[RMDB]
RNA sequence: GGGAACGACUCGAGUAGAGUCGAAAAGUUAUACGCCAUUCGUCAAAGCAGGCGAAUAGAGUAUUCGAUGCAUGUAUGUAUGGUGCGCGUUUGAUUCGCGAGAACAUUGAAGUUUCCAUGCCUGGAGACCGACCUGAGAGUUCGCUCUCAGGUCGGUAAAAGAAACAACAACAACAAC
Reactivity to DMS in 0.01 (KOAc 150mM, MgCl2 10mM, bicine 150mM(pH8.5), 24C), signal-to-noise 1, nucleotides 027 to 126: g040u000u000a030u010a160c090g000c010c000a000u000u000c000g020u000c000a100a150a140g000c170a040g000g020c000g020a010a010u000a110g010a120g020u010a110u000u000c020g000a140u020g020c000a120u030g010u000a050u020g020u000a070u000g000g040u020g020c020g020c040g010u000u020u020g040a200u000u000c030g000c020g000a190g000a030a100c080a090u010u010g010a040a170g010u000u000u000c020c020a060u000g060c080c050u010g000g000a100g020